[RMDB]
RNA sequence: GGGAACGACUCGAGUAGAGUCGAAAAUGUCAAAAUUUAGAAAUAAUUUUGCUGACUUGCUUCUCGUUUGUCUGCUUCAUAUUUCUCUGCAUAAUCACAAAAACUUAUGUAGCAUAUGUACUGAUUACUGGAAAAUAUUAUUCGUAAUAUUUUCCAGAAAAGAAACAACAACAACAAC
Reactivity to 2A3 in 0.01 (KOAc 150mM, MgCl2 10mM, bicine 150mM(pH8.5), 24C), signal-to-noise 1, nucleotides 027 to 126: u050g020u000c000a000a080a080a000u160u300u230a120g060a030a180a030u070a040a060u010u000u060u070g010c010u000g000a080c030u050u050g000c000u120u060c060u000c040g010u020u110u100g090u040c070u060g020c000u040u000c020a000u030a110u070u060u050c130u000c000u000g030c020a020u010a080a050u120c010a000c020a180a090a080a130a000c050u030u060a040u070g020u000a010g050c000a030u080a040u140g020u010a030c030u030g080a130u110u220a120
Reactivity to DMS in 0.01 (KOAc 150mM, MgCl2 10mM, bicine 150mM(pH8.5), 24C), signal-to-noise 3, nucleotides 027 to 126: u020g000u000c010a020a050a030a050u010u000u010a120g010a190a120a160u010a020a020u000u000u000u020g000c070u000g010a080c060u010u000g000c130u000u000c040u000c040g000u010u000u000g010u000c030u010g000c050u010u010c040a020u020a050u010u000u010c070u010c020u000g010c010a040u000a030a020u000c070a070c070a090a090a070a130a100c130u000u000a030u000g010u000a060g010c210a040u000a040u010g000u000a050c100u010g000a100u000u020a130